Chemical mapping of a 177-nucleotide RNA with 2A3 and DMS.

[RMDB]
RNA sequence: GGGAACGACUCGAGUAGAGUCGAAAAGAUAUGGAAUAUGUCACGCUAUUCAGGCGAAGAACUCGGAAACGAGGGAGCCUGAUAGCGAAGUCAUAUUCCUAAGUCAAAAGCGUAGUUCGCUACGCAACAUAAAAACUACCUUCGGGUAGUUUUUAUGAAAAGAAACAACAACAACAAC
Reactivity to 2A3 in 0.01 (KOAc 150mM, MgCl2 10mM, bicine 150mM(pH8.5), 24C), signal-to-noise 2, nucleotides 027 to 126: g020a010u090a030u180g010g000a000a000u000a000u000g010u020c000a020c070g010c010u030a020u300u300c020a010g000g010c040g180a300a020g020a080a030c000u000c000g010g050a050a070a040c000g020a000g030g000g000a010g010c000c000u000g000a000u000a000g000c000g000a010a000g000u000c000a000u000a010u000u000c000c000u020a130a010g070u050c030a030a050a090a070g030c000g000u010a010g010u050u130c230g000c120u010a000c000g000c020a000a020
Reactivity to DMS in 0.01 (KOAc 150mM, MgCl2 10mM, bicine 150mM(pH8.5), 24C), signal-to-noise 3, nucleotides 027 to 126: g000a030u000a300u000g000g010a000a000u000a000u000g000u000c020a180c010g000c000u000a010u010u000c000a010g000g010c000g000a090a160g000a130a200c020u000c000g000g000a100a100a220c000g010a010g010g000g010a080g010c000c000u000g000a000u000a000g000c010g020a040a070g010u010c000a010u000a000u000u000c000c000u000a030a080g010u010c050a080a100a130a140g020c010g010u000a010g010u000u020c210g000c000u000a000c000g010c010a110a130

Source: RMDB library TTRDEL, as collected in RNAgym.
Conditions: 150 mM KOAc, 10 mM MgCl2 and 150 mM bicine (pH 8.5), 24 C.
The 2A3 profile rests on 4,767 reads.